RNA sequence: GGGAACGACUCGAGUAGAGUCGAAAAUUCCAUUUGAGUAUCCUGAAAACAGGCUUUUCAGCAUGGAACGUACAUAUUAAAUAGUAGGAGUGCAUAGUGGCCCGUAUAGCAGGCAUUAACAUUCCUGAAAACGUGAAAAGGUUCGCCUUUUCACGAACAUGAUGUAUAGGUUCGCCUAUACAUCAUGAAAAGAAACAACAACAACAAC
Reactivity to DMS in 0.01 (KOAc 150mM, MgCl2 10mM, bicine 150mM(pH8.5), 24C), signal-to-noise 4, nucleotides 027 to 156: u000u010c000c000a060u000u000u000g020a100g020u000a050u000c020c010u000g000a070a110a100a260c030a090g020g020c130u000u000u000u000c020a040g020c130a030u000g010g010a060a030c050g010u000a110c080a110u010a140u000u000a050a090a180u010a130g000u000a030g020g000a030g030u000g010c020a130u000a080g020u000g020g000c000c000c030g030u010a140u010a160g030c060a030g010g010c010a040u000u000a070a050c030a070u000u000c010c000u000g000a070a030a060a130c010g020u010g000a010a000a020a020g020g030u000u010c300g030c020c000u000u000u000u000c000a010c000g010a020a090
Reactivity to 2A3 in 0.01 (KOAc 150mM, MgCl2 10mM, bicine 150mM(pH8.5), 24C), signal-to-noise 9, nucleotides 027 to 156: u020u010c000c000a010u030u030u040g020a020g020u070a070u060c000c000u030g050a050a060a070a130c030a000g050g000c020u070u070u030u020c030a040g010c030a030u020g010g020a040a020c040g090u170a050c040a050u210a090u190u300a130a110a110u170a080g170u050a010g010g020a010g000u020g030c080a060u040a100g090u060g110g200c000c020c010g120u180a120u140a200g130c110a030g000g000c000a000u010u000a020a020c000a010u000u020c000c000u000g050a070a080a020a030c010g000u000g000a000a000a000a010g030g000u030u040c150g140c000c000u000u000u000u010c000a000c000g000a010a000